[RMDB]
RNA sequence: GGGAACGACUCGAGUAGAGUCGAAAAGAAGUUCGGCAUUAUUGUCAACCUGGAUGAGUUGGAGGAGGAGGUCCUAAGGCGCUACAUCUUCGAUCUGGAAACCAAUGCCGAGGAUGAGCUUAUGGCCCAUUUAAAUUUAUUUCGAUAAAUUUAAAUGAAAAGAAACAACAACAACAAC
Reactivity to DMS in 0.01 (KOAc 150mM, MgCl2 10mM, bicine 150mM(pH8.5), 24C), signal-to-noise 9, nucleotides 027 to 126: g010a100a100g010u010u010c050g010g010c020a040u010u030a090u030u020g010u010c050a080a090c060c030u010g010g000a080u010g010a130g010u010u000g000g010a120g000g010a120g010g010a080g010g000u010c020c050u010a090a110g000g010c060g010c070u020a070c040a030u010c010u010u010c030g000a080u010c070u020g000g010a130a090a140c110c110a030a050u010g010c080c010g000a020g000g000a030u010g000a170g000c020u000u010a060u020g010g000c020c020
Reactivity to 2A3 in 0.01 (KOAc 150mM, MgCl2 10mM, bicine 150mM(pH8.5), 24C), signal-to-noise 9, nucleotides 027 to 126: g090a050a010g050u080u090c060g020g000c030a040u040u110a080u180u270g070u040c030a040a030c010c030u050g030g030a070u050g030a070g110u080u070g060g040a050g020g020a030g030g020a020g010g020u030c010c020u050a060a040g050g000c030g000c050u090a100c020a020u000c000u030u010c020g070a100u020c040u080g040g070a130a060a050c050c020a050a060u110g030c030c000g000a010g000g010a020u030g010a000g010c020u090u050a060u160g060g010c000c010